[RMDB]
RNA sequence: GGGAACGACUCGAGUAGAGUCGAAAACUUGUAAUCCAAGUGGAGACAUCAAAGUGGUUGAAUAUUGGGCUGUACCAGAUGGUUGGGCUUGGUGGGCUAAUUUCUGACUUGCCCUAUCCAAGCUUAGAGUUGGAUCAUGUGGCCCAAUUGAAGAAAUCAUCCAUAACAAGUUCGCUUGUUAUGGAUGAAAAGAAACAACAACAACAAC
Reactivity to 2A3 in 0.01 (KOAc 150mM, MgCl2 10mM, bicine 150mM(pH8.5), 24C), signal-to-noise 4, nucleotides 027 to 156: c010u010u030g040u110a100a090u060c050c010a080a080g020u080g110g060a060g030a030c040a070u120c110a130a110a060g100u120g080g020u080u050g050a190a040u050a010u090u020g010g000g000c020u020g020u050a090c010c030a030g030a110u050g110g070u020u080g000g010g000c000u010u000g000g000u000g010g010g000c030u070a060a070u120u160u150c130u170g070a090c030u060u090g010c010c000c000u010a030u040c000c000a000a000g000c000u000u020a010g000a000g030u070u090g030g010a040u070c030a070u180g010u080g050g000c000c000c000a000a000u010u000g020a020a010g060a010a060a000u020
Reactivity to DMS in 0.01 (KOAc 150mM, MgCl2 10mM, bicine 150mM(pH8.5), 24C), signal-to-noise 2, nucleotides 027 to 156: c030u010u010g000u010a100a160u010c120c030a100a170g010u010g000g020a180g020a130c070a140u010c070a030a080a190g040u000g010g050u010u000g020a030a110u000a090u000u000g020g010g030c000u000g020u020a080c170c030a140g000a060u010g020g020u000u000g020g010g020c010u010u000g020g050u000g040g000g040c030u000a030a070u010u000u020c150u030g010a020c160u000u000g020c000c000c030u010a140u010c000c010a020a060g000c020u000u000a030g000a190g000u000u000g000g000a070u000c080a070u000g000u000g000g000c000c020c010a000a060u000u010g000a060a130g010a100a000a180u000